Chemical mapping of a 177-nucleotide RNA with 2A3 and DMS.
RNA sequence: GGGAACGACUCGAGUAGAGUCGAAAAGGUCAAAAAAGGUACAAUAUCCUUAGCAGAUUUUGAACAGAAAGAACCUGAAAUAACCUACACUGAAUUUGAGCCUGAAACUAGGCCCCAGGUGGACUGCUAAGUUUUCACUGUUCGCAGUGAAAACUUAAAAAGAAACAACAACAACAAC
Reactivity to 2A3 in 0.01 (KOAc 150mM, MgCl2 10mM, bicine 150mM(pH8.5), 24C), signal-to-noise 3, nucleotides 027 to 126: g080g000u060c080a100a120a020a000a100a090g150g040u160a120c090a090a100u060a100u260c010c000u070u080a020g040c070a020g020a030u030u010u030u110g070a070a040c020a050g150a090a160a010g050a010a010c000c020u060g030a070a070a020u100a070a040c010c000u090a030c100a020c060u040g040a070a140u100u100u080g040a030g030c000c000u030g040a250a080a020c030u000a050g060g000c000c010c010c010a020g000g030u040g000g040a010c010u020g010c010
Reactivity to DMS in 0.01 (KOAc 150mM, MgCl2 10mM, bicine 150mM(pH8.5), 24C), signal-to-noise 3, nucleotides 027 to 126: g000g010u010c020a000a040a060a080a070a080g000g000u000a150c040a060a080u010a010u000c020c010u000u030a100g020c130a190g000a040u000u000u000u000g010a150a050c080a060g010a130a120a080g000a100a040c020c010u010g010a090a050a200u020a160a120c040c000u000a090c130a030c050u000g010a060a110u020u020u020g000a140g020c010c020u010g000a090a070a080c150u000a030g000g020c020c020c020c010a090g010g000u010g000g000a110c070u000g030c170